[RMDB]
RNA sequence: GGGAACGACUCGAGUAGAGUCGAAAAUCCCAUGCAUGAUGCAUAUCGAUCGAUCUGAUCUGAAUUAGGUCAUCGAUGCGCAUCUGGAUCCCCAUCUUGUUGAUAGUUCAAGAAAGUCCUUGGAAAAGUAAACAAAGGAGUUCGCUCCUUUGUUUACAAAAGAAACAACAACAACAAC
Reactivity to DMS in 0.01 (KOAc 150mM, MgCl2 10mM, bicine 150mM(pH8.5), 24C), signal-to-noise 2, nucleotides 027 to 126: u000c010c000c010a100u000g010c060a000u010g010a000u000g000c000a040u000a000u000c010g020a000u000c190g000a000u000c010u010g000a010u010c300u000g010a190a050u000u000a010g020g000u000c000a020u000c000g000a000u000g010c090g030c000a000u000c000u010g000g010a110u000c030c010c010c080a140u010c070u000u000g020u010u000g000a100u000a090g010u000u000c010a020a030g000a110a150a170g000u000c110c040u000u000g000g000a060a070a050a120